[RMDB]
RNA sequence: GGGAACGACUCGAGUAGAGUCGAAAAGAAAGGCAGCCACUGCAGCCCACGUAGCCAAUCGAUGCAUGCUUUUGCAUGCCGCCCACGACUGAGGGCAGCUGCGGCACUGAGGGCAGCUGCCGAAAGAAAUCGCUAGGUAGUUCGCUACCUAGCGAUUAAAAGAAACAACAACAACAAC
Reactivity to 2A3 in 0.01 (KOAc 150mM, MgCl2 10mM, bicine 150mM(pH8.5), 24C), signal-to-noise 1, nucleotides 027 to 126: g070a030a080a000g010g000c010a010g000c030c070a140c080u120g000c030a080g050c000c000c000a040c020g000u040a000g040c000c000a020a080u100c050g030a040u140g040c000a000u000g000c000u130u200u270u300g000c020a000u000g000c010c040g000c000c040c000a060c070g260a110c160u230g060a190g040g050g020c010a000g030c020u040g000c000g050g030c070a020c060u140g060a130g010g000g000c000a030g000c000u000g000c000c010g000a000a010a000g010a030
Reactivity to DMS in 0.01 (KOAc 150mM, MgCl2 10mM, bicine 150mM(pH8.5), 24C), signal-to-noise 2, nucleotides 027 to 126: g000a140a090a200g000g030c020a040g020c020c130a150c140u020g000c060a130g000c070c020c030a050c040g010u020a080g040c020c050a090a110u010c170g030a190u010g010c000a030u000g000c000u030u030u020u020g010c010a020u000g000c020c190g000c000c000c000a110c110g010a120c220u000g020a120g010g000g030c000a070g020c050u000g000c120g030g020c300a060c050u000g010a080g000g020g000c040a040g000c010u020g010c000c020g000a020a100a020g000a070
Structure probing data (2A3 and DMS) for a 177-nucleotide construct. The DMS profile rests on 1,188 reads.